[RMDB]
RNA sequence: GGGAACGACUCGAGUAGAGUCGAAAAGCGGUGAAUUAUGCGGUGUCAUAGGAAUUGAGGAUUUAUGUAAGAUGCUGAUAAUGAGUAAGGAACCUUAAAGUUAAUCGUUCCCUGUCUCUCCGCAGAAUACCGAUCACAUGUUCGCAUGUGAUCGGUAAAAAGAAACAACAACAACAAC
Reactivity to 2A3 in 0.01 (KOAc 150mM, MgCl2 10mM, bicine 150mM(pH8.5), 24C), signal-to-noise 2, nucleotides 027 to 126: g020c000g000g030u110g070a090a030u160u000a020u060g070c090g010g000u020g020u070c010a040u070a120g000g160a070a000u040u130g140a180g100g020a010u000u120u000a170u160g050u020a020a070g000a020u020g020c000u000g000a000u090a080a020u150g050a040g010u070a100a050g000g030a000a000c050c030u000u020a020a060a030g040u170u010a060a040u000c000g020u020u000c030c110c000u010g110u030c000u000c000u030c070c020g000c000a000g070a090a000
Reactivity to DMS in 0.01 (KOAc 150mM, MgCl2 10mM, bicine 150mM(pH8.5), 24C), signal-to-noise 3, nucleotides 027 to 126: g000c010g000g000u000g030a210a030u010u010a030u000g010c030g000g020u010g030u010c040a100u000a090g000g000a070a050u000u000g040a090g000g000a160u020u000u000a080u060g030u060a070a170g020a010u000g020c000u000g020a070u000a040a030u020g010a050g010u000a090a130g010g010a030a030c020c040u000u000a040a070a130g000u030u030a030a050u000c230g010u000u000c000c000c010u000g020u050c050u000c040u020c000c000g040c060a090g000a080a210
Structure probing data (2A3 and DMS) for a 177-nucleotide construct. 2A3 adducts were read by reverse transcription with SuperScript II with manganese. Conditions: 150 mM KOAc, 10 mM MgCl2 and 150 mM bicine (pH 8.5), 24 C.